[RMDB]
RNA sequence: GGGAACGACUCGAGUAGAGUCGAAAAUUUUAGUACAAGCGAGUACACGCAGUAUACUGCCACGUGUGUGAGAAUACUUUUAGUACAAGCGAGUACACGCAGUAUAGUGCCACUUGUGUGAGAAUACCCUUUUGGAUCCGUUCGCGGAUCCAAAAGGAAAAGAAACAACAACAACAAC
Reactivity to 2A3 in 0.01 (KOAc 150mM, MgCl2 10mM, bicine 150mM(pH8.5), 24C), signal-to-noise 2, nucleotides 027 to 126: u020u020u080u110a020g050u040a000c000a020a010g070c040g080a010g040u180a050c120a050c160g040c010a020g020u030a000u000a000c070u000g030c030c120a220c060g010u050g020u000g000u050g030a070g040a030a060u010a230c000u150u020u080u110a110g000u020a000c100a050a120g100c000g000a000g030u020a000c000a000c030g010c070a000g000u000a040u080a070g240u030g000c000c000a000c000u000u000g000u060g060u100g000a090g090a000a080u170a230c060
Reactivity to DMS in 0.01 (KOAc 150mM, MgCl2 10mM, bicine 150mM(pH8.5), 24C), signal-to-noise 1, nucleotides 027 to 126: u000u000u000u000a180g000u000a000c040a020a090g000c070g000a030g000u070a090c030a140c300g040c060a090g000u010a070u020a000c010u000g000c090c300a040c180g000u000g040u010g000u000g000a300g000a020a090u000a000c040u000u020u010u210a110g040u000a000c300a040a100g000c000g040a180g000u000a000c000a080c000g050c000a000g020u000a000u000a000g000u000g000c000c040a010c030u000u000g000u030g080u000g000a030g000a000a110u000a150c050
Source information: The record gives the reactivity of an RNA of 177 nucleotides to 2A3 and DMS. Conditions: 150 mM KOAc, 10 mM MgCl2 and 150 mM bicine (pH 8.5), 24 C. DMS adducts were read by reverse transcription with MarathonRT. It was measured as part of the RMDB library OK1LIB.